This 177-nucleotide RNA was probed chemically with DMS and 2A3. For DMS, 1,148 sequencing reads were counted. For 2A3, 1,215 sequencing reads were counted. The reactions ran in a buffer of 150 mM KOAc, 10 mM MgCl2 and 150 mM bicine (pH 8.5), at 24 C. For DMS the reverse transcriptase was MarathonRT.
RNA sequence: GGGAACGACUCGAGUAGAGUCGAAAACAGUGGUGCCGUUGGUGGAGUUCAGGUCUGCGAGCAAUGCGACCUGCCCGUCCCACCGGAUCUCCAAGUGACGGCGUGACACACCGGUGUCGGGCAGCCGGCUUGUGUGGCUCUUCGGAGCCACACAAGCAAAAGAAACAACAACAACAAC
Reactivity to DMS in 0.01 (KOAc 150mM, MgCl2 10mM, bicine 150mM(pH8.5), 24C), signal-to-noise 1, nucleotides 027 to 126: c060a030g020u000g000g000u010g010c020c060g030u000u000g010g050u000g000g020a040g000u030u000c040a000g000g040u000c000u110g010c000g000a240g030c260a150a050u030g000c000g000a070c000c000u000g000c290c000c000g040u040c070c070c000a000c260c000g040g000a070u010c010u000c000c000a140a080g010u050g020a030c010g000g000c020g010u070g050a040c080a000c070a290c010c020g000g000u000g050u010c040g020g020g010c040a270g000c010c000g010
Reactivity to 2A3 in 0.01 (KOAc 150mM, MgCl2 10mM, bicine 150mM(pH8.5), 24C), signal-to-noise 3, nucleotides 027 to 126: c040a000g080u050g030g050u040g040c040c000g010u000u080g000g040u070g010g010a090g010u100u140c040a010g000g050u000c040u240g050c020g040a070g120c110a180a080u300g010c000g010a000c000c000u000g000c000c000c000g020u040c040c030c000a030c020c000g010g030a080u110c120u080c010c000a140a000g090u070g130a060c000g010g010c020g050u070g010a020c020a000c020a040c030c060g070g000u060g030u080c000g040g040g010c010a030g060c030c000g000